[RMDB]
RNA sequence: GGGAACGACUCGAGUAGAGUCGAAAAGAAGUGGCAGGGACAUGCCCCAAAAGCUCGUUCUAGCAACAUAUGUUUGGCUAGUUCGAGCGAUUAGUCUAGAGGAGCGUCCUCUCGCCUAUUAACGAGACGUACCACUGGGAUUCGUCCCAGUGGUACGAAAAGAAACAACAACAACAAC
Reactivity to 2A3 in 0.01 (KOAc 150mM, MgCl2 10mM, bicine 150mM(pH8.5), 24C), signal-to-noise 3, nucleotides 027 to 126: g160a050a000g120u020g030g000c000a000g060g040g000a000c000a100u200g000c000c010c000c040a110a070a000a030g010c010u000c000g000u000u010c000u000a000g020c020a000a040c060a100u300a100u300g190u120u080u080g140g000c000u000a000g000u000u000c010g000a000g010c020g000a000u000u010a010g010u060c110u070a070g000a080g090g020a110g000c020g000u000c000c000u050c030u000c020g010c000c000u060a080u060u070a050a140c070g000a040g040a060
Reactivity to DMS in 0.01 (KOAc 150mM, MgCl2 10mM, bicine 150mM(pH8.5), 24C), signal-to-noise 2, nucleotides 027 to 126: g020a100a090g000u000g000g090c070a070g000g070g060a040c070a080u000g000c000c010c000c010a070a110a110a130g000c000u000c000g000u000u000c010u000a000g000c000a000a020c020a280u070a050u000g010u040u000u030g010g000c020u020a010g000u000u000c010g000a010g000c020g000a050u000u000a110g000u030c100u020a100g000a300g000g000a090g010c090g020u000c060c000u000c020u010c090g000c020c010u010a050u010u000a160a050c120g000a040g040a220